[RMDB]
RNA sequence: GGGAACGACUCGAGUAGAGUCGAAAAGGCCAUGGCCAUUCUUCAGUUCUUCCAGAGCAGUCCCAACGAAGACCAAAUCUUCCGCACCCUGAGGGCCCUCGUUCGAUUCCUCGAGGUAGUCUCGCAAAUUUACGCACUCAUUCGUGAGUGCGUAAAUAAAAGAAACAACAACAACAAC
Reactivity to 2A3 in 0.01 (KOAc 150mM, MgCl2 10mM, bicine 150mM(pH8.5), 24C), signal-to-noise 1, nucleotides 027 to 126: g030g000c010c000a050u050g070g050c010c020a090u100u020c010u070u050c030a060g010u030u040c000u120u000c040c020a000g000a020g070c010a010g070u060c020c030c010a010a020c020g070a060a000g000a000c040c060a030a080a100u010c020u080u000c010c030g030c030a050c000c010c020u020g040a090g000g070g020c000c020c000u030c020g040u030u010c010g000a020u000u010c000c000u000c010g010a020g010g030u070a020g020u000c000u010c010g030c060a130a180
Reactivity to DMS in 0.01 (KOAc 150mM, MgCl2 10mM, bicine 150mM(pH8.5), 24C), signal-to-noise 3, nucleotides 027 to 126: g010g020c020c050a090u000g020g020c030c030a120u010u000c020u000u000c100a130g010u010u000c040u000u010c040c050a110g010a110g020c060a070g010u010c010c020c000a090a120c150g000a070a060g000a050c060c070a050a050a300u010c050u000u000c020c050g000c070a080c050c030c060u010g000a090g030g000g020c050c020c010u000c150g020u010u010c030g000a070u000u000c020c000u000c000g000a040g000g000u000a090g000u010c020u000c000g030c220a060a060
Structure probing data (2A3 and DMS) for a 177-nucleotide construct. The reactions ran in a buffer of 150 mM KOAc, 10 mM MgCl2 and 150 mM bicine (pH 8.5), at 24 C. Reactivities are given for positions 27 through 126.